Chemical mapping of a 177-nucleotide RNA with 2A3 and DMS. For DMS the reverse transcriptase was MarathonRT. It was measured as part of the RMDB library TTRDEL. The reactions ran in a buffer of 150 mM KOAc, 10 mM MgCl2 and 150 mM bicine (pH 8.5), at 24 C.
RNA sequence: GGGAACGACUCGAGUAGAGUCGAAAAGAUAUGGAAUAGCUCGAAGACGAAGACAGUCGGAAACGAUCGAGUCUCGAGAACUACUAUUCCUAAGUCAAACUCUACGUGGCUUCGGCCACGUAGAGAACCAGGUUAAGUACUUCGGUACUUAACCUGGAAAAGAAACAACAACAACAAC
Reactivity to 2A3 in 0.01 (KOAc 150mM, MgCl2 10mM, bicine 150mM(pH8.5), 24C), signal-to-noise 2, nucleotides 027 to 126: g000a010u030a070u160g030g000a000a010u000a000g020c010u000c050g070a300a090g010a010c030g050a010a030g080a080c100a050g040u010c040g020g030a040a030a030c040g010a030u070c030g010a010g010u000c000u000c000g000a040g040a040a020c100u300a010c000u020a040u000u020c000c000u030a120a010g060u040c080a100a000a170c000u000c010u010a000c000g000u010g000g000c000u040u160c300g040g000c040c000a010c000g020u000a000g000a000g000a010a010
Reactivity to DMS in 0.01 (KOAc 150mM, MgCl2 10mM, bicine 150mM(pH8.5), 24C), signal-to-noise 2, nucleotides 027 to 126: g000a040u000a300u010g010g010a020a010u000a000g010c000u000c030g030a110a170g030a000c000g030a150a140g000a080c300a080g020u010c020g010g020a080a120a230c010g020a060u000c070g010a150g000u000c020u000c010g010a020g010a010a020c150u010a300c010u010a000u000u000c000c000u010a070a090g020u000c020a120a140a170c000u010c000u000a000c000g100u000g000g000c000u020u020c160g000g030c000c030a000c000g030u000a000g000a000g000a080a070